[RMDB]
RNA sequence: GGGAACGACUCGAGUAGAGUCGAAAAUUGUCGGUGAACCCGCUCUUGUGAGGCCUCUUCCCAGGUCCGGAGUCGACCUCCAUCUGAUCCGUCCGGGGCCUCUUCGCCGGGGGAGCCCCCUCCCCGUUAGGCACGAGCUUCGGCUCGUGCAAAAGAAACAACAACAACAAC
Reactivity to DMS in 0.01 (KOAc 150mM, MgCl2 10mM, bicine 150mM(pH8.5), 24C), signal-to-noise 6, nucleotides 027 to 129: u020u060g110u070c070g050g000u010g010a300a110c050c020c070g030c070u080c080u010u050g020u040g020a080g150g000c030c000u050c050u000u000c010c000c020a100g020g050u040c040c090g050g000a020g020u020c070g030a150c070c060u040c070c030a090u050c130u010g070a040u000c030c040g060u070c090c130g030g000g040g000c090c000u020c000u030u010c020g000c300c030g040g010g050g040g010a160g060c060c010c070c030c000u030c000c000c000c000g090u040u030a060g050
Reactivity to 2A3 in 0.01 (KOAc 150mM, MgCl2 10mM, bicine 150mM(pH8.5), 24C), signal-to-noise 4, nucleotides 027 to 129: u130u080g150u090c090g020g010u060g020a030a050c020c020c000g050c030u080c020u160u180g070u060g050a040g010g010c040c000u000c000u010u000c000c000c000a010g030g010u000c030c040g050g000a050g000u090c080g060a180c000c000u020c030c030a070u000c050u090g030a010u010c040c060g100u010c010c010g040g000g000g030c000c000u000c010u060u030c020g020c000c000g020g000g000g000g000a030g000c000c000c000c000c020u010c010c000c000c000g060u070u160a090g010